Overview:
Chemical mapping of a 177-nucleotide RNA with DMS and 2A3. It was measured as part of the RMDB libraries RFM100 and RFMREP. The RNA was probed in 150 mM KOAc, 10 mM MgCl2 and 150 mM bicine (pH 8.5) at 24 C. Values cover nucleotides 27 to 126.
[RMDB]
RNA sequence: GGGAACGACUCGAGUAGAGUCGAAAAAGGGAAUGAGCUUUGUAAGAGGCUCAGGAACGAGGAAUUGCUAGUAAUCGCGGACUCAUUAAGACGCGAUGAAUACGUCCCUGUUCUUUGUACACACCGCAGUAUUUACCAACUUCGGUUGGUAAAUACUAAAAGAAACAACAACAACAAC
Reactivity to DMS in 0.01 (KOAc 150mM, MgCl2 10mM, bicine 150mM(pH8.5), 24C), signal-to-noise 7, nucleotides 027 to 126: a080g000g010g000a190a080u000g000a020g010c000u000u010u010g010u040a100a110g010a020g010g000c000u000c000a030g000g010a080a050c000g010a070g000g010a030a050u020u040g050c070u000a050g010u010a120a020u000c010g000c000g000g000a150c050u010c300a130u030u030a090a060g000a130c000g000c000g000a000u010g000a150a120u010a040c030g000u000c010c000c010u010g000u010u000c000u010u000u010g000u000a070c130a120c140a120c030c010g000c170
Reactivity to 2A3 in 0.01 (KOAc 150mM, MgCl2 10mM, bicine 150mM(pH8.5), 24C), signal-to-noise 5, nucleotides 027 to 126: a000g100g010g000a050a090u030g000a010g000c010u040u040u040g040u070a090a070g040a010g110g000c000u000c010a000g020g000a000a000c020g030a070g000g030a100a130u270u250g030c050u040a000g010u050a020a000u000c000g000c020g060g100a240c040u050c080a200u200u230a110a020g010a000c010g000c000g000a000u010g000a010a020u060a020c010g030u010c000c000c000u000g010u010u000c000u030u060u080g070u070a030c100a010c020a020c080c030g030c020